[RMDB]
RNA sequence: GGGAACGACUCGAGUAGAGUCGAAAAGGCGGACAUCGGAUGCGUCCGGCUGACCGAACGCUGUUUGCACUCCGACCCGCCGACGUUGCAGGAGGUGUCCACGGCCCGCCGGCUGGUUCGCGAGCGGAUGCUAUCGCCCAUUCGUGGGCGAUAGCAUAAAAGAAACAACAACAACAAC
Reactivity to DMS in 0.01 (KOAc 150mM, MgCl2 10mM, bicine 150mM(pH8.5), 24C), signal-to-noise 1, nucleotides 027 to 126: g000g010c010g000g000a100c110a170u000c020g010g000a050u010g010c010g020u000c110c060g040g000c130u000g010a180c120c060g000a100a070c080g010c000u000g000u000u000u000g020c050a070c190u030c000c000g000a000c110c000c020g000c010c000g000a040c090g000u010u000g020c040a060g010g000a090g000g020u010g010u010c000c070a110c120g020g000c060c090c060g030c030c030g030g030c030u000g050g000u000u000c000g000c060g000a040g010c070g010g000
The record gives the reactivity of an RNA of 177 nucleotides to DMS. The data come from the RNA Mapping Database (RMDB), library OK2TRN. The RNA was probed in 150 mM KOAc, 10 mM MgCl2 and 150 mM bicine (pH 8.5) at 24 C. The DMS profile rests on 1,209 reads.